RNA sequence: GGGAACGACUCGAGUAGAGUCGAAAAGAGUCCGAUAGCGCAAUAGUAGGGUGACCGAAAGCUGAAAAGAACCCCGAGAAGGGGAGUGAAAAGAGCCUGAAAUCGGCCGGGGAUAGUGAGCAGUGGCGUAAUAAACGUCUUUCGAGACGUUUAUUACAAAAGAAACAACAACAACAAC
Reactivity to 2A3 in 0.01 (KOAc 150mM, MgCl2 10mM, bicine 150mM(pH8.5), 24C), signal-to-noise 3, nucleotides 027 to 126: g030a000g040u040c020c010g050a070u060a030g020c020g020c030a040a110u030a080g040u020a040g010g030g030u060g080a070c030c010g070a050a010a000g020c010u020g040a080a040a020a000g080a040a130c010c010c030c020g050a080g110a120a050g040g000g020g000a010g000u040g020a010a040a090a040g050a010g000c000c030u060g050a050a030a050u110c040g020g000c000c000g010g000g000g020a050u060a080g060u080g070a020g000c080a020g050u050g050g000c050
Reactivity to DMS in 0.01 (KOAc 150mM, MgCl2 10mM, bicine 150mM(pH8.5), 24C), signal-to-noise 6, nucleotides 027 to 126: g000a100g010u010c020c010g020a070u010a070g010c020g010c090a150a100u010a070g020u010a110g010g000g000u000g010a100c060c030g010a060a120a170g010c030u010g000a050a070a120a120g010a190a150c020c000c000c000g010a130g010a120a130g000g000g000g000a040g010u010g010a080a050a110a110g000a220g000c020c030u000g000a040a060a070u020c080g000g010c040c030g010g000g000g000a030u030a060g010u000g000a060g020c050a060g010u010g010g000c180